[RMDB]
RNA sequence: GGGAACGACUCGAGUAGAGUCGAAAAAGUGAGUAUGGCUCGUUACGACGAGCCAUACUCACAACGGUUUUCCUAAAUCGUCGGGAGACGGACCUUGGAAAACCUAGUAUUUAAAUAACUAGGUCAAAUUAGCCUAGAUCCUUCGGGAUCUAGGCAAGUGACUUUUAUUCUUCGGAAUAAAAGUCACAAAAGAAACAACAACAACAAC
Reactivity to 2A3 in 0.01 (KOAc 150mM, MgCl2 10mM, bicine 150mM(pH8.5), 24C), signal-to-noise 1, nucleotides 027 to 156: a000g020u000g000a010g000u000a000u000g000g060c000u040c040g000u050u110a120c300g010a000c000g000a050g020c000c000a000u000a000c000u000c000a000c000a000a000c000g000g020u000u000u010u000c030c000u000a000a000a040u060c000g020u010c010g000g070g020a220g010a010c000g020g000a000c000c000u000u020g020g000a000a000a000a000c000c000u000a010g010u010a060u040u110u070a120a240a140u160a020a030c030u020a020g010g010u020c010a030a100a170u180u220a030g000c000c000u000a000g000a000u000c000c000u020u060c100g090g000g010a000u010c000u000a000g010g000c000a000a000